[RMDB]
RNA sequence: GGGAACGACUCGAGUAGAGUCGAAAAACUUAAGGAGUGUUUUUAUUAUUCUUGUUUACUUUGUCUGAGACAGAGACAUAUUAUAUGUCCCAGGCUGGUCUCAAACUCCUGGAUGCAGGCACGUGUGCUGUAUAUCUGGUUUCGACCAGAUAUACAGAAAAGAAACAACAACAACAAC
Reactivity to 2A3 in 0.01 (KOAc 150mM, MgCl2 10mM, bicine 150mM(pH8.5), 24C), signal-to-noise 4, nucleotides 027 to 126: a000c020u070u050a040a020g020g020a040g040u040g030u030u040u090u050u070a130u130u040a070u040u050c020u060u060g070u060u150u040a080c020u110u130u130g020u000c020u030g030a030g000a050c020a030g050a010g010a040c010a070u120a040u120u130a100u030a010u110g010u010c000c000c010a010g020g020c040u030g000g050u030c040u010c000a090a100a040c010u000c010c000u010g020g010a050u130g030c010a020g040g010c030a020c110g130u110g040u070g100
Reactivity to DMS in 0.01 (KOAc 150mM, MgCl2 10mM, bicine 150mM(pH8.5), 24C), signal-to-noise 7, nucleotides 027 to 126: a030c020u010u010a090a030g010g010a040g020u000g000u000u000u000u010u010a070u040u010a090u020u000c030u000u010g010u010u000u010a080c060u000u000u000g020u000c020u000g000a060g010a040c040a070g010a110g000a060c100a030u010a080u010u010a110u010a070u000g010u000c000c040c010a060g010g020c080u000g010g000u000c100u000c080a040a070a040c010u000c010c010u000g010g010a090u000g020c070a060g010g000c070a040c130g010u000g020u000g020